[RMDB]
RNA sequence: GGGAACGACUCGAGUAGAGUCGAAAAGCUGAGGAAUUUGAGACGGAGUACGUACGCAUUGCGUCCAAAACAGGUUCCAAAGAGGAGCGGGUACGCGAGUAUUAUGCAGGGGAGGAAAAACGGCGUGGAUAGGUAUCGAGUUCGCUCGAUACCUAUCAAAAGAAACAACAACAACAAC
Reactivity to 2A3 in 0.01 (KOAc 150mM, MgCl2 10mM, bicine 150mM(pH8.5), 24C), signal-to-noise 6, nucleotides 027 to 126: g030c020u020g010a030g010g040a050a070u030u050u010g090a110g020a020c050g020g030a030g050u110a040c050g030u020a020c110g020c150a070u020u240g050c000g010u000c020c010a030a020a030a070c040a030g010g010u020u030c000c000a000a040a030g040a030g040g010a040g010c080g000g010g010u060a010c030g010c020g020a020g040u100a070u300u070a090u190g050c020a020g000g010g000g010a060g000g070a000a030a030a030a040c030g030g000c030g010u030g060
Reactivity to DMS in 0.01 (KOAc 150mM, MgCl2 10mM, bicine 150mM(pH8.5), 24C), signal-to-noise 5, nucleotides 027 to 126: g010c010u000g010a300g000g000a030a020u000u020u020g010a070g000a200c080g000g000a090g030u010a040c080g000u030a070c130g030c150a080u030u030g000c000g000u000c000c050a020a030a120a250c080a030g000g000u000u000c010c010a030a110a070g010a090g000g000a090g000c120g000g000g020u000a030c040g000c070g010a080g020u020a060u030u020a040u040g020c060a080g000g010g000g000a110g010g000a070a040a020a090a070c100g000g010c050g000u000g000